[RMDB]
RNA sequence: GGGAACGACUCGAGUAGAGUCGAAAAGAUGGGCAUGAGGAGUAGUAAAUUUGGCAAUUCACGGUCUGGUUUGCCAAGAAAGAUGAUCUCAGAAGACCAACAUUGCCCACAUCAGCAAGAGGGAGCCAUGGCUUUGUGGCAAGUCAGCAUUCAAGGACAAAAUCACGGAUUUCGAUCCGUGAUUUUGAAAAGAAACAACAACAACAAC
Reactivity to 2A3 in 0.01 (KOAc 150mM, MgCl2 10mM, bicine 150mM(pH8.5), 24C), signal-to-noise 4, nucleotides 027 to 156: g110a080u050g000g000g020c020a010u010g000a020g050g010a020g030u090a030g000u050a120a150a200u050u010u020g000g000c000a020a020u090u050c070a060c190g070g070u060c090u080g010g030u010u010u020g000c010c000a000a020g080a020a080a010g130a110u230g050a090u070c070u000c070a100g060a150a030g040a040c000c000a020a020c020a060u080u140g010c000c040c000a000c000a010u060c030a010g050c020a020a050g010a040g050g030g000a020g010c050c040a050u060g050g000c030u100u080u090g030u030g060g000c010a000a000g040u020c040a010g000c020a000u080u080c010a040a060g110g000a020
Reactivity to DMS in 0.01 (KOAc 150mM, MgCl2 10mM, bicine 150mM(pH8.5), 24C), signal-to-noise 1, nucleotides 027 to 156: g030a120u020g020g030g080c000a060u000g010a190g040g000a100g000u000a110g130u000a020a050a150u010u010u000g030g010c000a010a000u000u010c010a030c040g000g000u030c090u010g030g000u000u000u000g030c010c010a000a060g010a060a060a120g010a150u000g020a030u020c030u000c040a300g000a110a110g020a070c000c010a040a090c090a090u010u000g020c020c000c020a000c020a050u000c030a090g030c030a040a100g020a060g010g040g000a100g020c120c020a080u010g040g000c030u000u000u000g010u020g000g030c030a010a110g000u000c040a020g000c030a110u000u000c050a000a160g020g000a300
Annotation: Structure probing data (2A3 and DMS) for a 207-nucleotide construct. The data come from the RNA Mapping Database (RMDB), library OK3TST. For DMS, 2,355 sequencing reads were counted.